Source: RMDB library OK3TST, as collected in RNAgym.
This 207-nucleotide RNA was probed chemically with 2A3.
Reactivities are given for positions 27 through 156.
2A3 adducts were read by reverse transcription with SuperScript II with manganese.
[RMDB]
RNA sequence: GGGAACGACUCGAGUAGAGUCGAAAAGGGUCCCUGACCCCAUUACUGAUGUUUCAGCUCUUAGCUCCACUCACCUAAAGGACUUAGGUUUUUCAGAGUCUGGUAGCCAGUCACUACAGAGAAAUAACAGGAGUGGAAAAAAGGGGGAAUAUCAGGAGAUGGGCGGUAGGUUCGCCUACCGCCCAUCAAAAGAAACAACAACAACAAC
Reactivity to 2A3 in 0.01 (KOAc 150mM, MgCl2 10mM, bicine 150mM(pH8.5), 24C), signal-to-noise 1, nucleotides 027 to 156: g070g000g010u030c090c040c020u040g060a040c000c050c000c030a010u090u300a060c010u000g010a010u020g030u000u000u040c120a220g080c000u000c020u010u060a060g030c010u020c020c030a010c000u000c010a110c010c010u060a060a040a060g090g010a070c060u090u070a070g050g040u040u030u060u100u090c040a050g000a060g160u030c010u040g100g030u070a060g050c090c020a040g060u060c040a010c110u050a040c020a010g110a030g040a070a120a030u120a110a040c030a010g140g000a000g000u000g000g000a000a000a000a000a060a000g000g000g000g000g000a000a000u010a000u040c000a000g000g000a060